[RMDB]
RNA sequence: GGGAACGACUCGAGUAGAGUCGAAAAGGGGUCAACGUGGGAGAAGACAUGCUCCAUCUGAAGCCUCCACGGAUGAAGAGCAACAGCUUCUCCGUAACAUCGUUGACGGAGGCACCCAAAAGUCGACCAUACACAGUUCGCUGUGUAUGGUCGACAACAUAGGUUUAUACUUCGGUAUAAACCUAUGAAAAGAAACAACAACAACAAC
Reactivity to 2A3 in 0.01 (KOAc 150mM, MgCl2 10mM, bicine 150mM(pH8.5), 24C), signal-to-noise 4, nucleotides 027 to 156: g080g020g030g000u020c010a010a010c020g030u120g120g030g000a000g000a000a010g050a100c080a140u070g010c000u000c010c000a000u000c000u030g030a110a040g020c000c000u000c000c000a020c010g010g000a010u040g040a110a260g010a050g010c040a020a120c090a150g060c010u000u000c000u000c030c030g000u060a000a010c020a120u300c020g000u010u000g010a010c000g000g000a000g000g000c010a040c000c010c010a040a150a020a010g000u000c000g000a000c000c000a010u010a000c000a000c000a000g040u130u180c210g050c160u020g000u000g000u000a000u000g000g000u010c000g000a000c000a000a000
Reactivity to DMS in 0.01 (KOAc 150mM, MgCl2 10mM, bicine 150mM(pH8.5), 24C), signal-to-noise 2, nucleotides 027 to 156: g020g020g020g030u000c040a020a020c010g010u010g050g020g040a040g000a030a060g000a120c070a190u000g020c000u020c010c020a090u010c020u010g020a080a110g020c020c000u000c020c010a300c010g020g000a020u000g020a050a070g020a140g020c060a080a200c070a170g020c010u010u000c020u000c020c000g000u000a020a120c190a120u000c050g050u000u010g000a040c050g010g000a030g030g040c000a070c000c020c050a050a110a120a140g020u000c000g000a030c000c000a000u020a020c010a030c000a000g030u010u000c300g060c020u000g000u000g010u010a010u000g000g050u000c000g010a000c000a010a070
An RNA of 207 nucleotides, treated with 2A3 and DMS and read out base by base. Reactivities are given for positions 27 through 156. Source: RMDB library RNAMAK, as collected in RNAgym. The RNA was probed in 150 mM KOAc, 10 mM MgCl2 and 150 mM bicine (pH 8.5) at 24 C. For 2A3 the reverse transcriptase was SuperScript II with manganese.